[RMDB]
Structure probing data (DMS and 2A3) for a 207-nucleotide construct. For 2A3 the reverse transcriptase was SuperScript II with manganese.
RNA sequence: GGGAACGACUCGAGUAGAGUCGAAAACAGAUGAUAAGAAUGCCCCUGUGAGUUGAACUGUAGCACUUUGGUAUUCACAGAAUGAUUCAUCAUUCAUCCAUUUAUGUACAUUUUAUAUAACAAGUUCAUCUUCAUGCAUUUGUUUUCAUUUAUGUCACAAUUGUGGUAACUUCGGUUACCACAAUUGAAAAGAAACAACAACAACAAC
Reactivity to DMS in 0.01 (KOAc 150mM, MgCl2 10mM, bicine 150mM(pH8.5), 24C), signal-to-noise 2, nucleotides 027 to 156: c030a070g010a010u010g000a110u000a080a130g000a050a080u000g000c020c130c080c090u020g030u020g020a090g020u010u000g000a020a040c060u000g000u000a120g020c030a050c090u000u020u010g030g030u000a100u010u010c230a160c190a210g000a040a050u010g010a100u000u000c120a130u000c050a050u000u000c000a190u010c020c010a060u000u000u000a050u010g020u000a060c060a150u010u000u000u000a100u010a080u000a120a050c050a050a060g000u000u000c020a030u010c010u000u010c070a050u000g010c030a030u000u000u010g010u000u000u020u010c010a090u000u010u000a070u030g010u000c060a190
Reactivity to 2A3 in 0.01 (KOAc 150mM, MgCl2 10mM, bicine 150mM(pH8.5), 24C), signal-to-noise 5, nucleotides 027 to 156: c030a010g020a040u010g000a000u040a090a050g030a000a030u030g000c010c010c010c040u010g060u020g040a060g010u000u010g010a010a010c010u020g040u080a020g040c070a030c040u080u020u010g010g020u120a100u170u240c120a050c040a130g000a020a010u010g030a040u190u160c100a120u030c000a000u170u020c000a030u010c020c000a020u010u080u100a130u160g040u050a020c000a050u080u130u210u060a100u040a030u050a120a040c040a080a020g000u000u000c000a000u000c020u030u020c010a020u130g020c020a020u020u020u020g200u090u030u000u000c020a010u020u050u130a100u100g050u060c060a020

Overview
The DMS profile rests on 4,099 reads. The data come from the RNA Mapping Database (RMDB), library OK3TST. For DMS the reverse transcriptase was MarathonRT.